Chemical mapping of a 177-nucleotide RNA with DMS and 2A3. The 2A3 profile rests on 2,160 reads.

RNA sequence: GGGAACGACUCGAGUAGAGUCGAAAAGAUAUGGAAUUCCACACGCACGCAUCGAUCUUGAGUCGGAAACGACUCAAGGGAGCGUGAAGUGGAGAUUCCUAAGUCAAAACAGCACUUCGGUGCUGAAGUGACUACAUCCGUUCGCGGAUGUAGUCACAAAAGAAACAACAACAACAAC
Reactivity to DMS in 0.01 (KOAc 150mM, MgCl2 10mM, bicine 150mM(pH8.5), 24C), signal-to-noise 1, nucleotides 027 to 126: g000a070u000a300u000g000g010a000a010u000u010c010c000a020c010a040c300g000c010a010c010g040c000a300u000c280g010a040u010c020u000u000g000a010g000u000c000g000g020a060a050a130c010g010a000c000u000c000a000a010g000g000g010a020g050c020g020u000g000a000a010g030u010g000g000a010g010a050u000u000c000c010u030a070a120g000u000c010a100a080a110a300c020a000g000c010a010c010u000u010c150g080g010u000g010c000u000g000a040a120
Reactivity to 2A3 in 0.01 (KOAc 150mM, MgCl2 10mM, bicine 150mM(pH8.5), 24C), signal-to-noise 1, nucleotides 027 to 126: g030a040u090a050u100g010g030a010a010u080u020c040c010a010c030a040c300g250c000a000c000g050c010a150u300c100g090a070u050c030u000u000g000a010g010u000c010g000g000a020a040a040c000g000a000c000u020c000a000a000g010g000g010a020g000c000g010u020g040a010a000g010u010g020g030a090g060a050u010u000c000c000u040a230a000g070u010c040a000a000a170a250c010a000g030c020a010c030u110u160c300g170g000u030g000c000u020g010a080a000